[RMDB]
RNA sequence: GGGAACGACUCGAGUAGAGUCGAAAACGCCACCGCUACGGCGGUGGCAAGUAGAAAAGUUGGUGCUUAGACCACGCCCUCUACCGUAAUAAUAGAUAAAUAGGCGAGUAUCAGUACGCUGAUACAAAAAACACUCACACGUUCGCGUGUGAGUGAAGUGACAAACAAAGUUCGCUUUGUUUGUCACAAAAGAAACAACAACAACAAC
Reactivity to 2A3 in 0.01 (KOAc 150mM, MgCl2 10mM, bicine 150mM(pH8.5), 24C), signal-to-noise 1, nucleotides 027 to 156: c010g000c010c010a010c020c000g050c030u050a030c180g080g000c000g000g000u000g030g000c010a000a000g000u010a000g010a030a090a030a030g000u020u080g000g000u090g050c140u190u120a030g050a110c000c000a010c010g010c000c000c000u030c000u020a030c010c050g050u030a080a030u100a160a030u040a170g120a060u160a100a100a070u120a090g000g070c050g030a060g040u000a000u010c000a000g010u030a030c270g010c070u000g000a000u010a040c110a010a030a000a000a180a000c000a010c000u000c000a000c010a000c010g020u030u020c150g020c010g050u010g000u020g000a000g000u000g000a000a000